[RMDB]
RNA sequence: GGGAACGACUCGAGUAGAGUCGAAAAGGCCUAUUUCAAGGACAAGUACGACCGCGGCUUCAAUGAGAUGAUCUAUGUGCUCGGCGCGGAUCAUGGCGGUUAUGUCAAGCGUCUGGAAGCCGUUGCACGUAUUUUACGAUUUCGAUCGUAAAAUACGAAAAGAAACAACAACAACAAC
Reactivity to DMS in 0.01 (KOAc 150mM, MgCl2 10mM, bicine 150mM(pH8.5), 24C), signal-to-noise 8, nucleotides 027 to 126: g010g000c010c020u010a090u010u000u010c150a100a100g010g010a090c090a100a100g010u010a070c100g000a110c070c090g010c030g010g000c030u000u000c050a080a100u020g010a150g010a060u000g000a030u000c060u000a080u010g030u000g010c020u010c140g000g020c020g030c020g000g010a020u000c030a060u000g010g010c020g010g000u010u010a070u010g010u000c130a060a100g010c090g010u000c010u010g000g000a050a050g010c010c010g010u000u010g020c110a150
Reactivity to 2A3 in 0.01 (KOAc 150mM, MgCl2 10mM, bicine 150mM(pH8.5), 24C), signal-to-noise 6, nucleotides 027 to 126: g090g020c010c000u040a090u060u170u110c080a080a030g030g010a030c020a060a050g060u070a050c070g020a040c050c020g000c010g010g000c000u020u020c040a090a160u220g040a110g020a120u060g010a010u010c020u050a150u260g070u030g030c070u080c160g150g010c030g000c010g000g000a010u030c010a010u030g040g000c020g050g000u130u130a110u160g150u060c040a040a010g060c000g020u000c040u090g070g000a010a000g000c000c000g010u010u080g030c060a040